[RMDB]
RNA sequence: GGGAACGACUCGAGUAGAGUCGAAAAGAAGGUAAAACAGCCUGUGGGUGAAACACACCCACAGGGCCCAUUGGGCGCUAGCACUCUGGUUUCACGGUACCUUUGUGCGCCUGUUUUACCCAGAAAAACGCUAGUCACUAUUCGUAGUGACUAGCGUAAAAGAAACAACAACAACAAC
Reactivity to 2A3 in 0.01 (KOAc 150mM, MgCl2 10mM, bicine 150mM(pH8.5), 24C), signal-to-noise 3, nucleotides 027 to 126: g060a030a060g000g000u020a000a000a000a000c000a000g010c010c000u000g000u000g000g000g000u010g020a040a050a030c130a000c000a000c070c010c000a000c000a010g020g000g000c010c000c000a020u300u300g000g000g000c020g000c100u170a070g000c000a000c000u000c000u000g040g090u020u140u280c180a130c120g080g070u070a000c020c000u050u000u000g000u010g000c000g000c000c000u000g000u000u000u000u010a000c000c020c000a000g000a030a030a000a010
Reactivity to DMS in 0.01 (KOAc 150mM, MgCl2 10mM, bicine 150mM(pH8.5), 24C), signal-to-noise 1, nucleotides 027 to 126: g000a210a150g000g000u000a000a000a010a000c000a010g000c000c000u020g050u000g030g000g040u000g000a060a200a060c250a250c000a000c000c000c010a010c000a010g000g000g010c000c000c000a000u010u000g000g010g000c000g010c000u030a060g040c000a010c000u000c000u000g000g020u000u020u000c110a200c220g010g040u030a070c020c000u010u000u000g010u000g000c030g010c000c000u000g010u000u000u000u000a000c000c050c040a050g060a010a120a090a120
Chemical mapping of a 177-nucleotide RNA with 2A3 and DMS. The RNA was probed in 150 mM KOAc, 10 mM MgCl2 and 150 mM bicine (pH 8.5) at 24 C.